[RMDB]
RNA sequence: GGGAACGACUCGAGUAGAGUCGAAAAAGACUGCAGUAUUUUCCUUAUAUGAUCUGGUCCCACCGUGGGCAGCACUGCAUGCCCAGAGCCUGAGAGGAUUAUGAAAACAUGGCAAGGGAAGUGAGGCCUAAUGGUUUUGGUUCGCCAAAACCAUUAGAAAAGAAACAACAACAACAAC
Reactivity to DMS in 0.01 (KOAc 150mM, MgCl2 10mM, bicine 150mM(pH8.5), 24C), signal-to-noise 2, nucleotides 027 to 126: a080g010a100c140u000g000c000a060g010u010a060u000u010u000u000c010c030u010u000a130u000a110u010g010a060u000c040u000g010g010u000c000c020c030a100c030c090g020u000g000g010g020c020a030g010c090a040c090u020g010c030a130u020g010c020c000c000a100g000a120g020c030c020u000g000a120g000a150g020g010a040u000u020a060u020g000a060a020a050a060c090a030u000g010g020c040a090a140g010g000g000a050a030g020u000g000a070g020g000c070
Reactivity to 2A3 in 0.01 (KOAc 150mM, MgCl2 10mM, bicine 150mM(pH8.5), 24C), signal-to-noise 1, nucleotides 027 to 126: a000g080a020c090u090g030c030a030g050u110a050u010u100u020u050c010c000u000u080a120u040a050u240g110a090u010c040u040g020g050u060c000c000c010a000c040c100g090u040g000g000g010c040a000g030c040a040c090u110g020c010a080u030g000c010c000c000a010g010a010g000c000c040u050g020a060g010a010g120g030a080u070u070a090u120g040a070a000a000a030c030a030u080g050g000c050a010a010g000g000g030a000a090g010u050g030a030g010g000c030
An RNA of 177 nucleotides, treated with DMS and 2A3 and read out base by base. The 2A3 profile rests on 939 reads. Values cover nucleotides 27 to 126. The reactions ran in a buffer of 150 mM KOAc, 10 mM MgCl2 and 150 mM bicine (pH 8.5), at 24 C.